[RMDB]
RNA sequence: GGGAACGACUCGAGUAGAGUCGAAAAUGCCGGUAAUACAGAUAUUCUGAAACCCACCUGAUGACAUGAGACCCUACGAGGACAAUAGCAGCCUUUAAGUAAAGUCGCAUCAAUAGUUACACAAGGUUUCUAGUUUUUAAUUGUGUAAAGGGCCAAACCAACUACUGACAUUCGUGUCAGUAGUUGGAAAAGAAACAACAACAACAAC
Reactivity to DMS in 0.01 (KOAc 150mM, MgCl2 10mM, bicine 150mM(pH8.5), 24C), signal-to-noise 1, nucleotides 027 to 156: u000g050c020c010g020g040u030a070a090u000a120c030a040g000a180u000a060u000u000c030u000g010a090a050a000c060c000c020a070c100c030u000g020a090u010g000a150c030a060u010g010a130g020a080c040c010c000u020a050c080g000a100g040g030a030c040a090a140u010a130g040c050a070g010c030c000u000u030u000a080a200g030u000a020a050a080g010u010c000g000c040a030u030c040a070a120u010a150g000u000u010a010c060a030c020a000a070g000g020u000u010u000c010u000a100g000u000u000u000u000u000a010a250u000u000g000u010g000u000a020a070a100g000g010g010c060c050a050a080a100
Reactivity to 2A3 in 0.01 (KOAc 150mM, MgCl2 10mM, bicine 150mM(pH8.5), 24C), signal-to-noise 2, nucleotides 027 to 156: u060g010c000c020g000g040u140a130a040u060a060c040a030g100a040u140a050u210u100c020u010g040a050a060a070c020c010c000a010c010c010u030g040a060u030g040a060c030a070u100g030a080g070a070c000c000c020u020a050c040g040a030g030g010a020c070a080a130u070a110g070c070a000g020c010c000u010u030u050a110a030g030u070a090a090a000g030u030c010g020c050a030u020c040a030a100u120a170g050u050u030a000c000a000c000a040a000g070g040u060u070u000c040u100a050g020u000u010u000u110u100a130a150u060u030g000u000g000u010a100a070a010g030g000g000c000c000a000a070a030
The data come from the RNA Mapping Database (RMDB), library OK3TST. Structure probing data (DMS and 2A3) for a 207-nucleotide construct. Reactivities are given for positions 27 through 156. 2A3 adducts were read by reverse transcription with SuperScript II with manganese. The DMS profile rests on 1,892 reads. DMS adducts were read by reverse transcription with MarathonRT. The reactions ran in a buffer of 150 mM KOAc, 10 mM MgCl2 and 150 mM bicine (pH 8.5), at 24 C.